RNA sequence: GGGAACGACUCGAGUAGAGUCGAAAAGAGAGGGUAACCACCGGCGCGCGUCACUGAUAUAUCCACCGGGGAGUAAGGGGAGAAAAGGAUACAGCGCGACGAAGUUAGCACGCUGCCCCGUAAGGCUUGAAGAGUGUAGUGUUCGCACUACACUCAAACAACCUGUCGGAUUCGUCCGACAGGUUGUAAAAGAAACAACAACAACAAC
Reactivity to 2A3 in 0.01 (KOAc 150mM, MgCl2 10mM, bicine 150mM(pH8.5), 24C), signal-to-noise 1, nucleotides 027 to 156: g140a020g000a100g020g030g020u100a090a070c030c000a020c020c000g020g000c040g010c000g000c000g000u020c050a050c120u050g130a060u070a000u050a000u250c050c020a120c040c010g000g000g120g000a010g040u140a000a100g050g070g010g000a010g010a030a110a000a000g020g000a010u030a140c040a040g040c010g000c000g010a010c000g000a070a010g030u050u050a030g000c040a010c070g050c030u130g050c000c000c000c000g020u020a120a030g050g020c050u120u060g070a210a150g060a100g000u000g000u000a000g000u030g010u070u040c090g010c040a000c010u000a010c000a000c000u000c000a000a000
Chemical mapping of a 207-nucleotide RNA with 2A3. The 2A3 profile rests on 474 reads.